Notes:
The record gives the reactivity of an RNA of 177 nucleotides to 2A3 and DMS. For DMS, 1,207 sequencing reads were counted. For DMS the reverse transcriptase was MarathonRT. Conditions: 150 mM KOAc, 10 mM MgCl2 and 150 mM bicine (pH 8.5), 24 C.

RNA sequence: GGGAACGACUCGAGUAGAGUCGAAAAGAUAUGGACUUCGUGCGGCACUGAUGACCUCGGAAACGAGCAAGGUGUACACGAGAGUCCUAAGUCAAAACUCAGCUAGAGGUUCGCCUCUAGCUGAGAAGACAAGGGCAUUGUUCGCAAUGCCCUUGUCAAAAGAAACAACAACAACAAC
Reactivity to 2A3 in 0.01 (KOAc 150mM, MgCl2 10mM, bicine 150mM(pH8.5), 24C), signal-to-noise 1, nucleotides 027 to 126: g030a020u060a070u150g010g010a010c020u000u010c000g000u000g000c300g240g000c060a020c020u070g060a280u130g060a280c010c000u000c000g070g030a120a090a050c000g000a010g000c020a070a090g060g000u020g000u020a000c000a000c000g040a050g050a000g000u000c010c010u000a060a020g060u060c010a010a000a060a160c000u000c010a000g010c010u010a000g000a010g120g000u070u150c240g190c030c000u050c000u000a000g000c000u020g000a010g000a000a000
Reactivity to DMS in 0.01 (KOAc 150mM, MgCl2 10mM, bicine 150mM(pH8.5), 24C), signal-to-noise 2, nucleotides 027 to 126: g000a100u010a300u000g000g000a000c000u020u000c000g000u000g000c100g020g020c000a010c000u000g030a150u000g000a060c300c000u000c010g000g000a120a170a200c010g000a000g000c020a050a140g000g010u000g010u000a020c000a010c010g000a050g010a020g000u000c000c000u000a000a090g000u000c040a090a100a090a160c000u000c000a000g010c010u000a010g020a000g010g010u000u000c230g010c000c010u000c000u000a000g000c000u000g000a000g010a010a050